[RMDB]
RNA sequence: GGGAACGACUCGAGUAGAGUCGAAAAUGAGGUUUGUUCAUACAUCGUCACGGUGUGGAAACUAUUGGAGUCAGUGUGCGAUUCUGACUGGGUAUCUUAUAAGCUUACAAUAGGGAGACAAGGUGAGCUGGCGAUUAACUUUCGAGUUAAUCGCCAGAAAAGAAACAACAACAACAAC
Reactivity to DMS in 0.01 (KOAc 150mM, MgCl2 10mM, bicine 150mM(pH8.5), 24C), signal-to-noise 2, nucleotides 027 to 126: u010g020a100g030g010u000u000u000g010u010u000c080a130u020a040c030a040u000c030g000u000c200a160c100g040g020u000g010u010g020g000a090a090a080c050u000a110u000u020g000g000a020g030u000c010a010g000u010g000u010g020c180g000a120u010u020c030u000g010a040c010u000g020g020g000u000a030u000c150u010u000a090u020a100a060g020c040u000u000a030c110a030a070u020a040g000g000g000a100g010a090c110a030a090g000g020u000g020a040g010
Reactivity to 2A3 in 0.01 (KOAc 150mM, MgCl2 10mM, bicine 150mM(pH8.5), 24C), signal-to-noise 1, nucleotides 027 to 126: u090g010a020g000g130u170u180u120g010u100u000c060a050u080a130c000a030u010c020g300u200c150a060c300g050g030u040g040u020g040g000a030a030a060c030u040a070u080u190g040g010a010g000u010c040a020g010u020g070u120g230c110g120a080u080u000c010u020g020a000c000u020g000g000g030u070a030u000c020u060u160a120u070a300a050g010c020u060u010a010c030a060a090u030a100g050g040g000a060g010a050c020a030a010g060g010u030g000a120g030
Conditions: 150 mM KOAc, 10 mM MgCl2 and 150 mM bicine (pH 8.5), 24 C. Chemical mapping of a 177-nucleotide RNA with DMS and 2A3. The DMS profile rests on 1,687 reads. 2A3 adducts were read by reverse transcription with SuperScript II with manganese. Source: RMDB library OK2TRN, as collected in RNAgym.